[RMDB]
RNA sequence: GGGAACGACUCGAGUAGAGUCGAAAAUUGCUGCGCGUUAUUGAGUGGCCGUGUUCACACGCAGCUCCAGCUCAAGAUACAGAUACAGCUACAAAGAUACAUUUGUAUCUACACAUGUCCGUACAAACAAUUCAAUUAAUUGUUGUAGAGCGGAAUACGCGUAAUUUAUAUUCGUAUAAAUUACGCGAAAAGAAACAACAACAACAAC
Reactivity to 2A3 in 0.01 (KOAc 150mM, MgCl2 10mM, bicine 150mM(pH8.5), 24C), signal-to-noise 6, nucleotides 027 to 156: u150u100g000c000u020g010c030g000c020g030u050u060a060u050u070g030a030g020u070g020g010c040c070g060u060g040u200u160c060a050c000a000c100g000c010a030g000c020u040c030c020a090g010c010u010c020a030a010g000a070u070a100c010a010g060a040u060a100c020a010g020c030u030a060c070a070a120a010g030a010u030a030c020a090u080u110u260g010u000a010u000c030u070a040c040a000c000a130u140g030u000c000c010g020u040a020c030a010a090a000c000a000a030u020u080c060a040a060u090u240a100a020u030u040g010u020u030g040u060a080g010a030g100c000g000g040a010a020u100a030
Reactivity to DMS in 0.01 (KOAc 150mM, MgCl2 10mM, bicine 150mM(pH8.5), 24C), signal-to-noise 5, nucleotides 027 to 156: u000u000g010c020u000g010c020g010c090g040u000u010a140u000u010g000a110g030u010g010g020c050c070g040u000g010u000u010c190a300c130a100c040g020c020a080g020c020u000c030c070a130g000c030u000c020a110a110g000a130u000a060c010a050g010a110u000a060c060a050g020c030u000a240c140a090a150a100g000a110u000a020c030a290u010u010u000g020u000a010u000c010u000a110c080a090c060a130u010g010u000c000c000g050u000a100c070a110a040a030c010a010a030u000u000c050a130a140u000u010a040a020u000u000g020u000u000g000u000a080g020a300g020c010g000g000a060a050u000a140